This 177-nucleotide RNA was probed chemically with 2A3 and DMS.

[RMDB]
RNA sequence: GGGAACGACUCGAGUAGAGUCGAAAAACAUUGCUAUGAAAGUAUUGAUACUUUACUCCAGCCGAGACGGCCAAACGCAAACCAUCGCCUCUUAUAUAGCUAAGGAGUUAUCAACCGCAGCUACGUGGACAUUGGACGAUUUCGAUCGUCCAAUGUCAAAAGAAACAACAACAACAAC
Reactivity to 2A3 in 0.01 (KOAc 150mM, MgCl2 10mM, bicine 150mM(pH8.5), 24C), signal-to-noise 1, nucleotides 027 to 126: a000c020a070u100u140g000c020u000a040u210g100a120a100a050g010u010a020u050u080g080a050u000a140c040u070u050u050a050c010u030c020c010a020g020c000c010g000a020g020a050c060g050g000c000c020a040a090a090c080g020c050a070a080a000c010c040a060u050c050g010c040c010u040c020u040u010a100u010a010u040a140g000c010u020a060a080g040g000a020g080u030u050a120u020c010a000a090c000c010g020c010a010g020c000u030a040c000g140u050g090
Reactivity to DMS in 0.01 (KOAc 150mM, MgCl2 10mM, bicine 150mM(pH8.5), 24C), signal-to-noise 1, nucleotides 027 to 126: a050c050a100u000u030g000c100u030a110u010g000a090a010a000g050u000a140u000u010g010a190u020a030c050u000u000u000a050c020u000c090c030a070g000c070c050g010a090g000a060c030g000g000c000c030a030a140a110c160g010c150a030a030a090c010c000a070u000c050g060c130c020u000c020u020u020a090u040a080u020a000g000c000u010a090a100g000g000a070g000u000u000a060u000c160a130a040c020c050g040c300a000g010c060u000a020c160g040u000g000

Reactivities are given for positions 27 through 126.